[RMDB]
RNA sequence: GGGAACGACUCGAGUAGAGUCGAAAAACCGGAGGCCGACAAUCCAGGGAACCGGAUGUCAUCACGUUGUUGCAGUACCACAUGGCAUCUUAAAUCCGAUCUGCAAAUAAGCAUGUAGAAAGCUGAUAAAAUCACACACACUUCGGUGUGUGUGAAACUUGUUAAGAUUGUUCGCAAUCUUAACAAGAAAAGAAACAACAACAACAAC
Reactivity to DMS in 0.01 (KOAc 150mM, MgCl2 10mM, bicine 150mM(pH8.5), 24C), signal-to-noise 1, nucleotides 027 to 156: a170c030c040g010g050a120g000g040c050c020g050a110c060a050a110u000c050c000a070g030g020g000a130a130c030c080g000g000a030u000g030u000c010a080u020c090a140c070g020u000u000g000u010u000g000c000a080g010u000a070c050c010a090c040a010u000g010g000c020a020u000c020u000u000a080a080a120u000c080c040g000a120u010c030u010g020c060a060a080a070u000a040a090g040c020a080u010g010u000a090g010a050a070a140g020c020u010g020a110u000a070a050a100a170u000c000a000c010a000c000a010c010a030c060u000u030c300g040g020u020g020u000g000u000g000u000g000a010a010a100
Reactivity to 2A3 in 0.01 (KOAc 150mM, MgCl2 10mM, bicine 150mM(pH8.5), 24C), signal-to-noise 2, nucleotides 027 to 156: a000c010c000g010g030a020g000g040c010c030g000a040c060a020a030u010c000c010a040g020g000g020a070a080c040c030g040g000a020u030g050u040c030a050u020c040a030c130g010u050u040g030u020u050g040c020a030g030u070a070c010c000a060c030a080u020g000g000c010a010u000c040u060u140a080a110a030u040c000c020g020a110u010c000u030g020c010a000a040a110u110a080a080g040c080a060u100g010u040a020g120a160a110a010g010c070u040g040a020u140a100a140a010a020u020c000a000c000a000c010a010c000a000c000u030u060c180g050g000u010g000u010g000u000g000u000g000a010a000a000